[RMDB]
RNA sequence: GGGAACGACUCGAGUAGAGUCGAAAAGUGGAGGUCGUGGACCCGGAAACCGGGCGCAUCUAUCGCCCCCGCGUGCAGGCCGUGAUCGACGUUUACAGCGGCUGCAUCAUGGGCAUCGCCUUUUCCGGAACCGAUACAAGUUCGCUUGUAUCGGUUCAAAAGAAACAACAACAACAAC
Reactivity to 2A3 in 0.01 (KOAc 150mM, MgCl2 10mM, bicine 150mM(pH8.5), 24C), signal-to-noise 2, nucleotides 027 to 126: g080u070g030g060a040g000g010u090c050g040u100g120g100a170c040c000c000g100g000a080a050a010c130c070g000g020g000c020g000c020a060u130c110u260a170u270c130g010c020c000c000c000c040g040c070g040u010g020c000a030g070g290c040c020g020u030g030a090u160c140g080a090c140g070u160u150u100a070c050a000g010c010g000g000c000u000g000c000a030u040c000a050u120g000g030g000c010a050u040c020g000c000c000u050u010u010u000c010c020g000
Reactivity to DMS in 0.01 (KOAc 150mM, MgCl2 10mM, bicine 150mM(pH8.5), 24C), signal-to-noise 3, nucleotides 027 to 126: g050u010g000g020a080g000g010u000c020g020u000g010g010a160c040c010c020g010g010a030a060a040c300c300g030g010g020c140g030c300a050u010c150u000a090u040c180g010c010c000c000c130c120g030c170g010u000g000c010a020g010g000c010c000g030u010g000a120u010c130g000a110c170g000u010u000u010a100c150a260g000c000g000g000c020u000g000c030a030u000c040a140u000g000g010g010c010a120u000c030g010c020c020u000u000u000u000c000c010g020